This 177-nucleotide RNA was probed chemically with DMS and 2A3. The 2A3 profile rests on 1,344 reads. For 2A3 the reverse transcriptase was SuperScript II with manganese. The DMS profile rests on 680 reads.

RNA sequence: GGGAACGACUCGAGUAGAGUCGAAAAAGGACCCCUUCAGCGAACGGAAGAGCCUCCUCCUUCGGAGAGAAAGACCAUAGCGAUGGGGGGAGAUGCUAGGAGUGGGAGGCGACCGAAGCGAGGGGGAGCUUAAACUAUGCUUCGGCAUAGUUUAAGCAAAAGAAACAACAACAACAAC
Reactivity to DMS in 0.01 (KOAc 150mM, MgCl2 10mM, bicine 150mM(pH8.5), 24C), signal-to-noise 1, nucleotides 027 to 126: a010g030g000a270c020c000c010c000u000u000c000a150g000c010g010a210a060c010g030g020a090a080g020a210g000c000c020u000c000c030u000c240c000u010u010c010g010g000a090g010a060g010a040a040a080g000a130c030c050a090u010a020g000c080g070a160u000g000g000g030g020g020g020a090g000a060u010g000c000u020a120g010g000a110g020u020g000g010g000a100g010g000c000g020a190c010c000g000a110a290g000c030g020a040g010g030g000g010g000a020
Reactivity to 2A3 in 0.01 (KOAc 150mM, MgCl2 10mM, bicine 150mM(pH8.5), 24C), signal-to-noise 1, nucleotides 027 to 126: a000g180g070a070c030c000c000c020u000u040c030a070g030c030g050a170a150c000g010g010a110a000g070a130g150c000c020u000c000c000u000c020c000u030u030c010g150g060a050g030a010g090a090a060a000g100a030c000c020a070u100a020g120c090g200a140u130g010g000g020g000g000g020a030g020a020u180g020c040u070a040g000g020a020g000u060g010g000g030a050g000g050c010g030a000c010c000g040a050a000g000c000g010a000g000g000g000g020g010a010